This 177-nucleotide RNA was probed chemically with DMS and 2A3.

RNA sequence: GGGAACGACUCGAGUAGAGUCGAAAAACAUCUUCUAGACAAGAUCCGACAUCUUUUGGAGGUAUUCUCGCGCGUUUAAAUGUCGCUUCUAUCUCUGAAACCCAAACUGAUCGUUUUAGCGACAAACUAUUAGAGAACAUUUCGAUGUUCUCUAAUAAAAAGAAACAACAACAACAAC
Reactivity to DMS in 0.01 (KOAc 150mM, MgCl2 10mM, bicine 150mM(pH8.5), 24C), signal-to-noise 7, nucleotides 027 to 126: a100c160a070u000c030u000u000c030u010a100g010a100c130a050a040g000a030u000c080c110g000a110c100a080u000c040u000u000u010u000g000g010a050g000g000u000a050u000u000c020u000c090g020c100g010c100g020u000u010u010a050a070a100u000g020u000c010g010c010u000u000c060u000a040u010c020u000c020u000g010a050a060a110c040c030c030a060a100a090c140u000g000a060u000c080g010u000u010u000u000a050g020c020g000a020c040a060a070a090c180
Reactivity to 2A3 in 0.01 (KOAc 150mM, MgCl2 10mM, bicine 150mM(pH8.5), 24C), signal-to-noise 6, nucleotides 027 to 126: a010c020a030u030c010u090u030c030u060a050g030a160c030a070a010g000a050u040c070c040g080a070c040a100u040c030u030u100u040u050g040g010a020g000g030u050a060u070u040c040u010c030g030c010g010c020g040u010u100u160a110a190a080u090g030u030c010g010c000u040u000c010u010a050u010c010u000c010u050g080a140a120a120c000c020c020a030a050a080c090u070g040a160u060c030g050u040u040u090u200a030g010c000g020a010c000a010a060a020c030

Conditions: 150 mM KOAc, 10 mM MgCl2 and 150 mM bicine (pH 8.5), 24 C.
Values cover nucleotides 27 to 126.